[RMDB]
RNA sequence: GGGAACGACUCGAGUAGAGUCGAAAACGACCGCAGUUCGCUGCGGUCGAAAAGAACUGACUACCGUUCGCCUAGCCGGUCUCAGUUUAAGGGCGGAGAUUAAAACCCUGACGUUCGCGUCAGGGAAGGGAGAUACUUAGUUCGCUAAGUAUCUCCCAAAAGAAACAACAACAACAAC
Reactivity to 2A3 in 0.01 (KOAc 150mM, MgCl2 10mM, bicine 150mM(pH8.5), 24C), signal-to-noise 3, nucleotides 027 to 126: c010g010a000c020c010g040c010a020g040u060u090c190g040c120u030g000c040g000g000u000c000g000a000a010a000a000g020a020a010c030u040g120a040c030u120a090c030c040g020u030u090c010g060c030c050u050a040g060c020c010g090g060u000c000u000c030a040g010u060u080u130a060a060g070g020g020c040g090g010a110g010a030u180u290a050a100a090a090c010c000c000u010g000a010c020g000u020u050c240g010c010g110u010c000a000g000g000g000a010a010
Reactivity to DMS in 0.01 (KOAc 150mM, MgCl2 10mM, bicine 150mM(pH8.5), 24C), signal-to-noise 2, nucleotides 027 to 126: c030g010a000c010c000g050c000a020g020u000u030c140g010c010u000g000c010g050g000u000c020g000a010a030a110a120g000a070a140c040u000g020a080c100u000a080c060c050g000u000u000c040g030c060c030u000a080g020c130c010g000g000u010c300u000c040a080g020u000u000u000a050a060g000g000g000c050g000g000a070g010a120u000u020a070a060a140a120c000c000c000u000g000a010c000g020u000u010c240g000c000g010u000c000a000g000g010g010a000a000